The record gives the reactivity of an RNA of 177 nucleotides to DMS and 2A3. It was measured as part of the RMDB libraries RFM100 and RFMREP. Conditions: 150 mM KOAc, 10 mM MgCl2 and 150 mM bicine (pH 8.5), 24 C. For 2A3 the reverse transcriptase was SuperScript II with manganese. Reactivities are given for positions 27 through 126.

[RMDB]
RNA sequence: GGGAACGACUCGAGUAGAGUCGAAAAGAAACUGACCUAAGACAGUAGGGGAGCAGUGCUCAUAAUAUUCCUACCGAGGCACAAAACGUCAUUAUAAAAUAACGUAUUGUACUUUCGUGUCUAGGUUGACUACACAGUAUUUCGAUACUGUGUAGUCAAAAGAAACAACAACAACAAC
Reactivity to DMS in 0.01 (KOAc 150mM, MgCl2 10mM, bicine 150mM(pH8.5), 24C), signal-to-noise 3, nucleotides 027 to 126: g020a100a050a130c100u000g000a070c010c000u000a020a060g010a050c030a210g000u000a030g020g000g010g000a010g030c010a130g000u020g020c010u000c020a030u000a010a020u030a110u040u010c000c000u000a000c040c050g000a010g010g020c010a010c000a000a000a060a000c010g000u000c040a010u010u010a160u020a090a100a040a040u000a060a010c000g000u000a030u000u000g010u010a030c010u000u010u020c060g010u030g000u000c000u000a030g010g020u000u000
Reactivity to 2A3 in 0.01 (KOAc 150mM, MgCl2 10mM, bicine 150mM(pH8.5), 24C), signal-to-noise 9, nucleotides 027 to 126: g060a030a080a010c060u050g030a020c000c000u050a160a020g070a040c050a060g100u040a020g010g020g010g010a020g040c090a060g130u060g170c000u000c030a030u060a090a010u070a120u240u290c000c000u000a010c000c020g010a010g000g000c020a000c000a010a020a020a000c040g020u010c040a020u030u160a100u110a180a150a070a060u130a050a020c040g010u010a030u050u040g040u050a020c020u060u210u090c070g020u030g000u010c000u000a010g010g000u010u040